An RNA of 207 nucleotides, treated with DMS and 2A3 and read out base by base. The reactions ran in a buffer of 150 mM KOAc, 10 mM MgCl2 and 150 mM bicine (pH 8.5), at 24 C.

[RMDB]
RNA sequence: GGGAACGACUCGAGUAGAGUCGAAAACUCUUGUUAGGUGAAAGUUGAUGGUCGCCGUGUCAGUCCAUGCCUUUGAAAACAGUUCUAUGUAGUAGGGAGUCUAGAACCUAUGAGAGUUAGAACUUGCUAUGCCUUGGACUCUUCGGAGUCCAAGGAAGCUACUAGGACGAUUCGUCGUCCUAGUAGCAAAAGAAACAACAACAACAAC
Reactivity to DMS in 0.01 (KOAc 150mM, MgCl2 10mM, bicine 150mM(pH8.5), 24C), signal-to-noise 3, nucleotides 027 to 156: c040u000c020u000u010g030u000u000a040g020g000u000g010a070a090a130g010u000u000g030a110u000g020g000u000c030g030c030c030g020u000g010u000c040a080g020u010c070c040a080u000g030c050c030u000u010u000g000a070a090a070a050c060a060g010u000u000c040u000a040u010g020u000a300g020u000a040g010g010g010a160g000u000c120u000a180g010a110a190c010c000u000a010u000g010a250g030a180g010u000u000a000g000a050a040c030u000u000g030c010u000a100u000g020c010c000u000u000g000g020a030c010u000c000u000u010c280g030g000a020g000u000c000c010a000a010g000g020a020a030
Reactivity to 2A3 in 0.01 (KOAc 150mM, MgCl2 10mM, bicine 150mM(pH8.5), 24C), signal-to-noise 3, nucleotides 027 to 156: c020u040c010u030u100g090u080u090a060g020g010u040g050a150a090a040g050u080u070g040a070u070g020g040u050c030g030c030c040g060u030g030u020c030a030g030u010c010c010a030u100g020c000c010u100u090u100g110a080a050a020a020c060a040g000u040u020c020u010a030u060g020u030a020g000u010a000g040g000g010a030g020u000c010u040a050g030a120a060c020c000u000a020u030g040a070g010a010g050u050u010a000g000a020a020c020u010u070g000c030u050a060u160g040c000c000u000u000g000g010a000c010u000c000u000u020c050g130g000a010g000u000c000c000a000a000g000g010a000a000